[RMDB]
RNA sequence: GGGAACGACUCGAGUAGAGUCGAAAACGGGAGGCCCUUUGCUGUGUCCCUGCCAAGAGGACCUACUGCAGUCCUUCCCGAAGGACCUCAGUGUCCUGGGACCCUACCCAGAUCUGGUCCCCACUGCGUGUAUGUCCUUUUUCGAAAGGACAUACACAAAAGAAACAACAACAACAAC
Reactivity to DMS in 0.01 (KOAc 150mM, MgCl2 10mM, bicine 150mM(pH8.5), 24C), signal-to-noise 7, nucleotides 027 to 126: c080g000g000g010a070g010g000c160c060c050u000u010u010g000c080u010g010u000g010u000c040c010c020u000g010c140c160a090a110g000a150g010g000a030c010c030u000a020c010u000g010c080a060g010u000c010c060u010u010c000c010c030g020a110a030g000g010a020c000c030u000c140a080g010u000g000u000c060c020u000g020g000g000a070c050c050c120u010a120c040c020c060a090g010a080u010c090u000g000g000u000c020c000c020c170a090c100u000g010c270
Reactivity to 2A3 in 0.01 (KOAc 150mM, MgCl2 10mM, bicine 150mM(pH8.5), 24C), signal-to-noise 5, nucleotides 027 to 126: c020g000g010g010a050g040g010c040c030c000u060u120u090g100c150u030g010u030g020u080c010c010c000u040g120c060c040a130a030g090a150g120g030a020c010c030u060a040c070u060g060c010a020g010u020c000c000u040u080c010c000c000g000a030a030g000g000a010c010c030u180c130a090g000u070g010u260c030c010u010g000g000g020a030c000c000c030u080a090c060c020c020a030g000a170u030c050u060g010g010u020c010c010c010c010a110c060u160g050c060
An RNA of 177 nucleotides, treated with DMS and 2A3 and read out base by base. As a SHAPE reagent, 2A3 marks flexible, mostly unpaired nucleotides at the ribose 2'-OH. It was measured as part of the RMDB library OK2TRN. The reactions ran in a buffer of 150 mM KOAc, 10 mM MgCl2 and 150 mM bicine (pH 8.5), at 24 C.